RNA sequence: GGGAACGACUCGAGUAGAGUCGAAAAGAUUCCUCGUUGUUGAGCGAGGUUUAAACAAAUCGACCACACAAACGUAGAGCCGACUACGGAUAUAUAAAUUAAGGCAUUAAGUGUGAUAAGGAGACAAAAAACGAUGUUGUGUUCGCACAACAUCGAAGGACAUACAGAUGUUCGCAUCUGUAUGUCCAAAAGAAACAACAACAACAAC
Reactivity to DMS in 0.01 (KOAc 150mM, MgCl2 10mM, bicine 150mM(pH8.5), 24C), signal-to-noise 1, nucleotides 027 to 156: g000a300u000u000c010c000u000c030g020u000u000g030u000u000g010a050g000c080g000a090g000g010u000u000u000a050a060a130c090a160a080a080u010c060g020a100c020c010a080c030a220c100a130a150a110c020g000u000a090g000a200g030c070c040g010a120c000u030a150c000g020g000a120u000a080u000a080u000a120a010a120u000u000a060a200g000g010c010a210u000u000a100a080g040u000g000u000g000a020u000a040a100g020g000a170g010a060c070a010a030a090a060a100a180c050g000a010u000g010u000u000g030u000g080u000u010c270g180c000a080c000a020a030c000a000u010c000g020a050a100
Reactivity to 2A3 in 0.01 (KOAc 150mM, MgCl2 10mM, bicine 150mM(pH8.5), 24C), signal-to-noise 3, nucleotides 027 to 156: g080a120u100u090c000c000u000c000g000u000u010g000u010u020g000a000g000c010g000a000g000g070u090u110u050a020a020a010c060a000a010a020u010c000g000a000c010c000a010c000a000c000a000a200a010c010g000u010a000g000a010g020c010c000g040a020c000u010a000c010g020g010a010u060a010u010a000u020a140a050a060u170u160a030a010g010g010c020a010u130u170a150a110g010u010g000u000g010a020u030a080a040g130g040a080g040a050c160a020a130a040a080a000a000c010g000a000u010g010u010u000g000u000g010u030u050c120g080c060a000c000a000a000c000a000u000c000g000a010a000